[RMDB]
RNA sequence: GGGAACGACUCGAGUAGAGUCGAAAACCUGUUAUCUGACCAAUAACAGAAUGCACCACAGCGUAAAAUCAUCUGAUUGGGUGAGUUGGUCGCACCGCCAUUUGACGAACGACCGCCAAGCCUAAGCACUACGAGUAUGUGUUCGCACAUACUCGAAUACGUAGUCCGUCUUCGGACGGACUACGUAAAAAGAAACAACAACAACAAC
Reactivity to 2A3 in 0.01 (KOAc 150mM, MgCl2 10mM, bicine 150mM(pH8.5), 24C), signal-to-noise 2, nucleotides 027 to 156: c000c000u000g000u000u000a000u050c010u000g040a040c000c030a020a030u060a010a000c000a000g110a040a070u110g010c030a020c030c060a030c050a080g020c010g050u060a000a000a000a240u130c020a020u000c030u110g120a190u070u090g040g020g000u010g000a120g010u010u080g040g000u000c010g010c030a120c070c030g120c060c020a190u140u040u210g040a040c000g010a070a020c010g000a010c000c000g000c000c000a030a000g010c000c030u070a060a050g050c050a080c190u150a090c070g000a000g000u000a000u000g070u010g060u140u120c170g030c020a000c000a000u000a020c010u000c000g000a000a000